[RMDB]
RNA sequence: GGGAACGACUCGAGUAGAGUCGAAAAGAUAUGGACUAUGGGAGUCGCUACUCGGAAACGAGUAGGCGACGAGGAUCAUAUAAGUCCUAAGUCAAAAGUCAGAGGCAACUUCGGUUGCCUCUGACAAGUACAAGGUAAUGUUCGCAUUACCUUGUACAAAAGAAACAACAACAACAAC
Reactivity to 2A3 in 0.01 (KOAc 150mM, MgCl2 10mM, bicine 150mM(pH8.5), 24C), signal-to-noise 2, nucleotides 027 to 126: g020a010u060a030u110g000g010a000c010u000a020u020g000g000g030a020g010u010c010g000c010u010a000c000u010c000g030g040a050a060a050c010g010a000g000u040a080g060g180c010g000a010c000g000a040g010g000a000u030c010a010u170a040u070a230a050g000u000c010c010u010a070a020g040u030c040a020a090a030a160g000u000c010a000g000a000g010g020c010a010a000c020u130u190c300g080g000u010u000g000c000c010u010c000u000g000a000c000a010a000
Reactivity to DMS in 0.01 (KOAc 150mM, MgCl2 10mM, bicine 150mM(pH8.5), 24C), signal-to-noise 4, nucleotides 027 to 126: g000a030u000a180u000g000g000a020c010u000a030u000g000g000g010a060g010u000c000g020c000u000a010c000u000c010g000g010a080a060a130c000g010a010g000u000a020g020g010c010g020a010c010g000a090g010g000a110u020c040a020u010a090u000a160a050g000u000c000c000u000a050a140g010u000c040a090a070a130a120g010u000c000a000g000a010g000g010c000a010a000c000u000u010c210g030g000u000u000g000c010c000u010c000u000g000a000c000a000a050